[RMDB]
RNA sequence: GGGAACGACUCGAGUAGAGUCGAAAAGAUAUGGAGCGAGUACACAGCAACAGCUUGCAUCGGAAACGAUGCAAGACAUGCUGGAGUACCGCUCCUAAGUCAAAACGUAGUCCUUCGGGACUACGAACUCAUGUAAUUGCUUCGGCAAUUACAUGAGAAAAGAAACAACAACAACAAC
Reactivity to 2A3 in 0.01 (KOAc 150mM, MgCl2 10mM, bicine 150mM(pH8.5), 24C), signal-to-noise 3, nucleotides 027 to 126: g020a020u060a030u220g000g000a020g010c010g040a090g060u000a010c040a000c000a020g010c000a020a090c050a260g080c000u000u010g000c000a010u000c000g040g000a050a040a050c020g000a000u010g010c010a000a000g010a010c000a010u050g000c000u000g000g040a130g010u000a010c000c000g000c000u000c000c000u000a020a000g030u010c030a020a020a100a090c010g010u010a000g010u010c000c000u050u110c300g100g000g000a000c000u000a000c010g000a000a000
Reactivity to DMS in 0.01 (KOAc 150mM, MgCl2 10mM, bicine 150mM(pH8.5), 24C), signal-to-noise 5, nucleotides 027 to 126: g000a040u010a300u010g000g000a020g030c000g000a130g030u000a010c000a090c010a010g000c000a030a080c300a200g000c010u000u000g000c000a010u000c000g010g000a170a100a270c020g020a020u000g010c010a010a020g010a030c100a160u010g000c000u000g000g000a180g020u000a000c010c000g000c000u000c000c000u000a000a060g010u010c040a080a070a110a250c020g000u000a000g020u000c000c000u000u010c250g030g020g010a010c000u000a000c010g010a030a120
Annotation: Chemical mapping of a 177-nucleotide RNA with 2A3 and DMS. The RNA was probed in 150 mM KOAc, 10 mM MgCl2 and 150 mM bicine (pH 8.5) at 24 C. It was measured as part of the RMDB library TTRDES. The DMS profile rests on 4,868 reads.